[RMDB]
RNA sequence: GGGAACGACUCGAGUAGAGUCGAAAAUCCGUUGUCUUCGGACAACGGAAAAGAAGCGCGGACACAAAAGCACGAGCUCGCCGUGACGCGCAUAGGCGAUAAAAAGCUCAAACUUCGGUUUGAGCAACAUUAUUAGGUUGUUCGCAACCUAAUAAUGAAAAGAAACAACAACAACAAC
Reactivity to 2A3 in 0.01 (KOAc 150mM, MgCl2 10mM, bicine 150mM(pH8.5), 24C), signal-to-noise 8, nucleotides 027 to 126: u000c000c000g000u000u000g000u000c010u020u060c250g120g000a000c010a000a000c000g000g010a020a040a010a020g030a100a030g000c020g010c030g030g140a100c040a010c020a200a140a020a010g040c020a020c120g050a050g050c010u010c020g020c030c010g000u010g020a020c010g000c000g000c010a000u080a020g010g000c020g000a000u180a060a130a010a020a010g000c000u000c000a000a000a010c010u050u070c210g060g010u000u010u000g000a000g010c000a000a010
Reactivity to DMS in 0.01 (KOAc 150mM, MgCl2 10mM, bicine 150mM(pH8.5), 24C), signal-to-noise 8, nucleotides 027 to 126: u000c000c000g020u000u000g010u000c000u000u010c200g030g010a020c000a000a010c010g010g000a010a010a060a100g000a150a120g010c010g000c000g010g010a140c100a070c100a060a110a090a090g010c020a080c160g010a160g010c090u000c020g010c130c100g010u000g000a110c010g000c020g010c010a070u010a050g010g010c060g010a070u010a060a070a070a100a060g000c000u000c000a000a000a010c000u000u010c170g030g000u000u000u000g000a010g000c000a030a040